[RMDB]
RNA sequence: GGGAACGACUCGAGUAGAGUCGAAAAAAGAGCCCCCAAUGAAAGGAUUCAGCAGCGCUGCUUCUAUUAUUAUCCCGUAAAUCUUUUUAAAUUCUGGAACUAAUUAUAUAGAGGAUAUGUCUCAAUUUGUAAGUUCUAUAUUCGUAUAGAACUUACAAAAAGAAACAACAACAACAAC
Reactivity to 2A3 in 0.01 (KOAc 150mM, MgCl2 10mM, bicine 150mM(pH8.5), 24C), signal-to-noise 2, nucleotides 027 to 126: a000a000g070a030g000c050c030c010c000c010a030a010u070g050a040a010a050g060g010a010u110u090c030a060g000c000a010g080c030g000c090u060g010c000u080u020c020u050a070u110u010a070u020u040a040u030c040c000c010g060u010a080a060a180u050c060u010u190u090u080u300a050a150a140u200u040c040u080g050g000a030a050c030u030a020a030u300u020a120u080a030u030a140g030a020g000g020a020u020a050u230g040u000c010u010c040a030a080u000u000